[RMDB]
RNA sequence: GGGAACGACUCGAGUAGAGUCGAAAAAUCAUGGUGUUGGCGGUUGGAAUAUCGAGGCCCGAUUCCACGAUGGUUGUGGAAAGAAGCACAUCAUACUGCCCGUCAUAGAAGGCAUUCAUGAUGUCAACGGUACGAUUAUAUUCGUAUAAUCGUACCGAAAAGAAACAACAACAACAAC
Reactivity to 2A3 in 0.01 (KOAc 150mM, MgCl2 10mM, bicine 150mM(pH8.5), 24C), signal-to-noise 2, nucleotides 027 to 126: a000u070c020a010u040g020g000u040g020u060u100g020g020c030g020g000u040u050g040g030a090a070u060a040u140c090g020a060g070g030c010c010c010g040a070u060u000c010c010a020c030g050a100u190g190g090u250u200g010u030g010g040a010a010a040g090a040a000g020c060a000c020a110u030c000a000u020a020c010u020g010c020c020c020g060u050c020a020u040a160g130a090a040g070g000c000a010u080u100c030a000u120g020a010u020g050u060c030a070a040
Reactivity to DMS in 0.01 (KOAc 150mM, MgCl2 10mM, bicine 150mM(pH8.5), 24C), signal-to-noise 8, nucleotides 027 to 126: a050u000c050a050u010g010g020u000g010u000u000g010g010c050g010g010u000u000g000g000a110a080u000a060u000c100g010a150g000g000c040c020c030g000a240u000u000c010c000a020c020g010a150u010g020g030u010u010g020u000g000g000a030a040a090g000a160a100g020c140a040c030a030u000c020a030u000a060c060u000g010c060c010c030g010u010c180a140u010a140g010a130a080g000g000c000a010u000u000c120a020u000g000a020u010g010u000c100a090a150
Chemical mapping of a 177-nucleotide RNA with 2A3 and DMS.
The 2A3 profile rests on 8,579 reads.
It was measured as part of the RMDB library OK2TST.
For DMS, 14,152 sequencing reads were counted.